[RMDB]
RNA sequence: GGGAACGACUCGAGUAGAGUCGAAAAGUGUCGUCAGUCGGCGACAGCAUGGUCCGUUAGGUAACGACUGGUGGAAGAUGGGGCGUAGUUAACUAUGGUUUCUGAGUUCGCAGCCGCAGCCGUCUCCGCCGUUCGGUCGGUUCGCCGACCGAACGGCAAAAGAAACAACAACAACAAC
Reactivity to 2A3 in 0.01 (KOAc 150mM, MgCl2 10mM, bicine 150mM(pH8.5), 24C), signal-to-noise 1, nucleotides 027 to 126: g020u000g000u000c000g000u060c010a120g050u000c000g010g040c000g070a000c000a000g170c090a060u130g070g060u130c000c000g000u120u080a080g030g040u080a070a000c060g020a060c000u090g020g000u060g130g000a150a040g060a000u190g030g030g030g000c040g000u060a000g120u090u080a060a060c000u000a080u180g070g000u020u000u090c020u070g120a060g070u020u020c000g000c000a040g060c130c000g000c070a060g060c000c000g000u000c060u080c000c000
The data come from the RNA Mapping Database (RMDB), library OK1LIB.
Structure probing data (2A3) for a 177-nucleotide construct.
For 2A3 the reverse transcriptase was SuperScript II with manganese.
Values cover nucleotides 27 to 126.
For 2A3, 324 sequencing reads were counted.
As a SHAPE reagent, 2A3 marks flexible, mostly unpaired nucleotides at the ribose 2'-OH.
The RNA was probed in 150 mM KOAc, 10 mM MgCl2 and 150 mM bicine (pH 8.5) at 24 C.